Conditions: 150 mM KOAc, 10 mM MgCl2 and 150 mM bicine (pH 8.5), 24 C. This 207-nucleotide RNA was probed chemically with 2A3 and DMS. The 2A3 profile rests on 1,465 reads. For 2A3 the reverse transcriptase was SuperScript II with manganese. DMS adducts were read by reverse transcription with MarathonRT.
RNA sequence: GGGAACGACUCGAGUAGAGUCGAAAACGCGAAUUGCUUGUGUUUGCUGAUUGGUCUUAAAAUAGCAAGCUACGUUGGGAUUGAGUCAGGCAGUUCCAAAAGAGAUUUACUGACUCGCUUGGUCUAGGUUUGAGUUAUGUAUCGAGUUCAAGUUAAAACCUAGUGAAGUGUUCGCACUUCACUAGGUAAAAGAAACAACAACAACAAC
Reactivity to 2A3 in 0.01 (KOAc 150mM, MgCl2 10mM, bicine 150mM(pH8.5), 24C), signal-to-noise 3, nucleotides 027 to 156: c050g030c030g040a030a080u080u060g020c030u050u020g010u020g030u060u030u020g020c040u060g090a230u180u120g090g050u160c060u100u240a110a110a100a060u160a040g040c020a050a020g000c030u040a010c010g020u010u020g000g000g000a040u020u030g000a020g010u000c000a000g000g020c000a000g010u050u000c020c000a010a020a050a000g050a000g000a030u060u130u200a030c020u020g000a020c000u010c040g000c010u030u030g010g030u010c020u040a030g020g070u000u030u130g060a080g020u070u050a110u210g080u030a050u050c030g010a030g020u020u110c020a030a000g000u010u050a000a110a030
Reactivity to DMS in 0.01 (KOAc 150mM, MgCl2 10mM, bicine 150mM(pH8.5), 24C), signal-to-noise 1, nucleotides 027 to 156: c030g030c030g060a110a160u000u000g030c020u000u000g000u000g020u000u000u000g010c020u000g010a170u010u000g020g040u010c030u000u000a010a110a060a120u000a120g030c020a040a090g000c030u000a080c040g020u000u040g010g010g000a120u000u000g000a030g000u000c060a120g010g000c080a020g020u000u010c020c030a060a010a100a190g020a190g000a100u000u010u020a090c040u000g000a010c000u000c010g000c010u000u010g010g040u000c030u000a060g010g020u000u000u020g010a120g000u000u000a040u010g040u000a030u000c060g000a120g000u000u000c040a050a070g000u000u010a120a050a040